[RMDB]
RNA sequence: GGGAACGACUCGAGUAGAGUCGAAAACAGCCACCGCCGUCCCCGGUCUCUCGCAGCUCACUUUUUCAAUGAGCGACUGCACUGGGAAAGAGAUUGUGCUUUCCACCGUCCCAUCCACCGGGGUUGCCUGGUAUAAGGCUUUCGAGCCUUAUACCAGAAAAGAAACAACAACAACAAC
Reactivity to DMS in 0.01 (KOAc 150mM, MgCl2 10mM, bicine 150mM(pH8.5), 24C), signal-to-noise 2, nucleotides 027 to 126: c100a130g010c050c040a040c080c090g020c070c050g000u000c030c020c010c030g010g030u000c060u000c050u010c140g030c040a060g000c130u000c000a030c040u000u000u020u030u010c250a130a120u010g000a020g000c030g000a050c050u000g010c020a110c130u000g000g000g030a030a040a050g000a070g000a140u010u010g000u010g000c040u000u000u000c040c010a100c120c050g000u000c010c010c010a120u010c110c060a070c020c000g030g010g010g020u010u010g000c090
Reactivity to 2A3 in 0.01 (KOAc 150mM, MgCl2 10mM, bicine 150mM(pH8.5), 24C), signal-to-noise 1, nucleotides 027 to 126: c020a000g000c000c010a050c020c060g080c030c000g090u090c000c000c020c000g030g070u040c070u010c000u040c090g060c000a010g020c010u020c010a050c030u040u130u060u250u150c100a170a130u190g000a010g040c010g040a060c020u030g000c030a020c050u080g040g000g070a030a020a010g070a000g010a030u120u270g060u230g050c010u070u030u020c030c000a090c050c030g030u010c000c010c000a030u080c030c030a010c020c010g000g000g020g000u020u050g020c010
Conditions: 150 mM KOAc, 10 mM MgCl2 and 150 mM bicine (pH 8.5), 24 C. An RNA of 177 nucleotides, treated with DMS and 2A3 and read out base by base. Reactivities are rounded to 0.1 and cut off at 0 and 3. DMS (dimethyl sulfate) methylates the pairing face of unpaired adenines and cytosines. Reactivities are given for positions 27 through 126. For DMS the reverse transcriptase was MarathonRT.